[RMDB]
RNA sequence: GGGAACGACUCGAGUAGAGUCGAAAAGACUGCGUGCACUGGAGACGAUAUCGAGCCGGAAAUUAAUCGAUAAUGUCUCGAGUAGUGGAUACGAUCCGGCAAGUAUCGACUACGUGUGCUCGUAGGACCGGCACUAGCGAUUCGUCGCUAGUGCCGGAAAAGAAACAACAACAACAAC
Reactivity to 2A3 in 0.01 (KOAc 150mM, MgCl2 10mM, bicine 150mM(pH8.5), 24C), signal-to-noise 1, nucleotides 027 to 126: g020a040c000u000g000c000g000u030g000c020a000c030u030g040g060a000g000a000c040g000a000u010a000u040c020g000a000g030c000c000g000g160a120a120a070u300u300a000a160u130c010g000a000u000a050a030u190g020u010c000u000c000g000a020g000u030a000g000u030g080g000a000u000a000c020g020a050u000c000c000g000g000c000a070a000g000u010a010u000c000g050a000c000u000a000c000g130u050g000u000g000c010u000c000g010u000a000g000g000a000
Structure probing data (2A3) for a 177-nucleotide construct.
Conditions: 150 mM KOAc, 10 mM MgCl2 and 150 mM bicine (pH 8.5), 24 C.
It was measured as part of the RMDB library OK1LIB.